Conditions: 150 mM KOAc, 10 mM MgCl2 and 150 mM bicine (pH 8.5), 24 C. Chemical mapping of a 177-nucleotide RNA with DMS and 2A3. As a SHAPE reagent, 2A3 marks flexible, mostly unpaired nucleotides at the ribose 2'-OH. It was measured as part of the RMDB library M2PK50. For 2A3 the reverse transcriptase was SuperScript II with manganese. For 2A3, 2,129 sequencing reads were counted.
[RMDB]
RNA sequence: GGGAACGACUCGAGUAGAGUCGAAAAUCUAACUCAUUCGUGAGUUAGAGUGAGCGCAGCGACCAUUGGGCCGGUGGGGCGCUGUCGGUGCCGCGCGUGGCGAUAGUGCUUGCUUCGGCAAGCACAAAGCCUAGUCAUCAUUCGUGAUGACUAGGCUAAAAGAAACAACAACAACAAC
Reactivity to DMS in 0.01 (KOAc 150mM, MgCl2 10mM, bicine 150mM(pH8.5), 24C), signal-to-noise 2, nucleotides 027 to 126: u000c000u000a000a000c010u000c000a050u010u020c190g010u010g000a020g000u000u000a000g000a020g040u010g000a100g030c070g000c010a040g020c030g000a130c030c030a080u010u000g010g020g020c030c020g020g010u000g010g000g000g010c020g020c010u000g000u000c040g000g020u000g020c040c040g010c070g020c090g010u000g010g010c020g000a100u000a120g010u000g000c000u000u000g010c000u000u020c160g020g000c000a000a000g000c000a000c000a030a060
Reactivity to 2A3 in 0.01 (KOAc 150mM, MgCl2 10mM, bicine 150mM(pH8.5), 24C), signal-to-noise 2, nucleotides 027 to 126: u000c000u000a010a000c030u000c020a020u050u050c220g160u050g020a020g000u020u000a000g000a000g020u100g030a040g010c040g000c030a030g020c020g040a040c000c020a010u040u110g060g060g030c030c040g080g010u050g020g030g050g120c050g010c060u030g040u050c050g020g100u090g020c040c040g050c010g010c050g060u060g030g010c020g020a070u110a090g010u000g000c000u010u020g010c010u030u020c120g110g000c030a010a000g020c000a000c000a000a000